Conditions: 150 mM KOAc, 10 mM MgCl2 and 150 mM bicine (pH 8.5), 24 C. An RNA of 170 nucleotides, treated with 2A3 and DMS and read out base by base. Values cover nucleotides 27 to 129. 2A3 adducts were read by reverse transcription with SuperScript II with manganese.
RNA sequence: GGGAACGACUCGAGUAGAGUCGAAAACGAACAGAAGAGCCCCGCACGGGAUAGGAGUAAGACCAUAGCGAUGGGGGGAGAUGCUAGGAGUUGGGGGAGACCGAAGCGAGGAGGAAAGCAAAGAAAGACGGUGUAACCUUCGGGUUACACAAAAGAAACAACAACAACAAC
Reactivity to 2A3 in 0.01 (KOAc 150mM, MgCl2 10mM, bicine 150mM(pH8.5), 24C), signal-to-noise 8, nucleotides 027 to 129: c020g030a030a000c030a050g080a100a020g020a050g020c000c000c020c020g060c040a070c050g020g000g020a040u110a070g020g020a040g010u100a080a000g050a040c010c020a080u090a020g050c040g070a090u120g010g000g010g020g030g000a010g000a020u090g020c030u040a020g050g010a030g010u130u100g010g000g000g010g000a020g010a000c000c020g010a020a000g060c030g010a020g000g020a000g020g000a040a010a000g040c100a060a040a010g070a030a070a000g070a040c100g040
Reactivity to DMS in 0.01 (KOAc 150mM, MgCl2 10mM, bicine 150mM(pH8.5), 24C), signal-to-noise 5, nucleotides 027 to 129: c040g030a090a090c130a070g030a080a090g000a060g000c160c040c020c020g000c150a080c130g000g000g000a050u040a080g090g020a050g000u040a080a050g030a100c090c010a120u040a000g000c070g040a040u040g010g010g020g000g020g010a040g000a060u050g030c080u000a000g000g040a050g020u030u070g000g000g030g020g000a040g010a070c040c030g020a080a020g040c120g020a040g020g030a040g000g010a040a010a060g030c150a080a050a110g000a030a030a030g000a100c140g000

Overview:
Source: RMDB library 15KLIB, as collected in RNAgym.